[RMDB]
RNA sequence: GGGAACGACUCGAGUAGAGUCGAAAAGGAAGUAACCUCCAUUGCACUUAGGAGGGGUGCUUUCCUAAGGUCUGCCCAAGUGGCAGAGCCUACGUCAUAAUUUGUGGUAGUGGGGGCUUGCGUUCGCCAAAUCAUGGACCUUCGGGUCCAUGAUUUGAAAAGAAACAACAACAACAAC
Reactivity to DMS in 0.01 (KOAc 150mM, MgCl2 10mM, bicine 150mM(pH8.5), 24C), signal-to-noise 3, nucleotides 027 to 126: g010g010a030a010g010u010a100a120c000c000u000c000c000a120u010u020g030c170a100c160u020u020a160g000g000a050g020g030g000g020u000g000c010u000u010u000c000c010u010a040a020g010g020u000c000u000g010c000c000c030a130a150g030u040g020g000c010a000g000a020g000c000c010u020a080c130g000u040c090a120u000a100a120u020u010u010g010u010g020g020u030a090g030u010g020g010g000g000g010c130u010u010g000c050g000u000u000c030g000c060
Reactivity to 2A3 in 0.01 (KOAc 150mM, MgCl2 10mM, bicine 150mM(pH8.5), 24C), signal-to-noise 3, nucleotides 027 to 126: g010g000a020a000g020u050a080a060c010c000u000c000c010a030u040u300g060c090a010c140u070u030a060g000g000a000g030g010g020g060u080g020c000u020u180u060c000c000u010a010a030g000g010u000c000u020g000c000c010c020a270a140g120u300g060g000c000a000g010a040g000c000c000u020a030c050g120u060c070a040u020a210a110u070u130u250g090u080g070g030u030a020g030u080g000g030g000g000g050c060u030u070g000c020g060u010u000c050g000c060